Description:
Structure probing data (2A3 and DMS) for a 170-nucleotide construct.

RNA sequence: GGGAACGACUCGAGUAGAGUCGAAAACUUCAGCGAACAGAGGCGCUCGCACGGGAUAGGAGUAAGACCAUAGCGAUAGGGAGAGAUGCUAGGAGUUAGAGGAGACCGAAGCGAGGAGGAAAGCAAAUGGGGCGUGAGUUCGCUCACGCCAAAAGAAACAACAACAACAAC
Reactivity to 2A3 in 0.01 (KOAc 150mM, MgCl2 10mM, bicine 150mM(pH8.5), 24C), signal-to-noise 3, nucleotides 027 to 129: c060u130u070c040a020g020c040g030a000a000c010a050g030a050g010g000c050g040c060u010c010g030c030a050c000g040g000g010a010u050a100g040g010a030g020u140a130a010g010a000c010c000a040u080a050g040c020g050a040u080a070g020g050g010a030g030a010g010a030u090g000c000u010a050g020g040a000g030u090u060a020g000a000g050g020a050g000a050c020c000g010a000a000g070c020g010a020g000g000a000g000g040a070a000a000g050c070a020a070a030u210g010g000
Reactivity to DMS in 0.01 (KOAc 150mM, MgCl2 10mM, bicine 150mM(pH8.5), 24C), signal-to-noise 3, nucleotides 027 to 129: c090u020u000c100a070g020c060g030a030a040c080a000g030a010g030g030c150g000c090u010c140g040c140a160c120g000g060g030a090u020a110g000g000a050g010u050a050a140g000a100c080c030a130u030a060g020c080g030a050u060a000g120g000g030a110g020a040g020a060u060g000c020u070a100g070g000a070g040u060u030a060g000a070g020g020a100g020a020c030c050g010a030a090g010c220g020a040g000g000a040g010g070a030a050a030g000c100a030a000a090u020g040g000
Notes
2A3 adducts were read by reverse transcription with SuperScript II with manganese. The RNA was probed in 150 mM KOAc, 10 mM MgCl2 and 150 mM bicine (pH 8.5) at 24 C.